[RMDB]
RNA sequence: GGGAACGACUCGAGUAGAGUCGAAAAAGAUUAGUCGAAUGAGUCUGACUCCUAAUGUAGAUGACAACACUCUACUUUUUUCGGAAGAUCCUCAAAAUCAUGCCACAGAAAAUGGAACAAGCCAGGCUGCGAUAGAGUUGUUCGCAACUCUAUCGCAAAAAGAAACAACAACAACAAC
Reactivity to 2A3 in 0.01 (KOAc 150mM, MgCl2 10mM, bicine 150mM(pH8.5), 24C), signal-to-noise 1, nucleotides 027 to 126: a000g160a050u130u170a050g090u020c000g080a020a050u270g000a100g030u040c000u100g040a080c030u060c020c000u010a070a040u120g000u030a020g010a060u080g010a090c000a050a000c010a180c020u000c000u000a000c000u000u000u000u040u000u130c060g000g000a100a000g050a090u040c100c020u010c060a000a170a080a060u070c010a000u210g060c030c010a080c010a020g000a080a140a000a000u100g010g010a140a000c020a050a010g010c010c020a000g040g050c070
Reactivity to DMS in 0.01 (KOAc 150mM, MgCl2 10mM, bicine 150mM(pH8.5), 24C), signal-to-noise 1, nucleotides 027 to 126: a050g000a030u020u000a190g020u010c070g020a100a130u030g000a000g000u000c100u000g120a190c020u000c020c070u020a060a190u000g030u000a010g000a030u000g000a180c300a030a060c210a030c170u000c000u000a000c000u000u020u000u000u000u030c000g020g060a150a080g000a010u030c030c000u060c180a000a030a030a020u090c040a000u000g000c040c030a110c120a030g000a140a010a000a110u000g000g030a090a100c150a020a050g000c070c010a040g000g000c090
Structure probing data (2A3 and DMS) for a 177-nucleotide construct. Values cover nucleotides 27 to 126.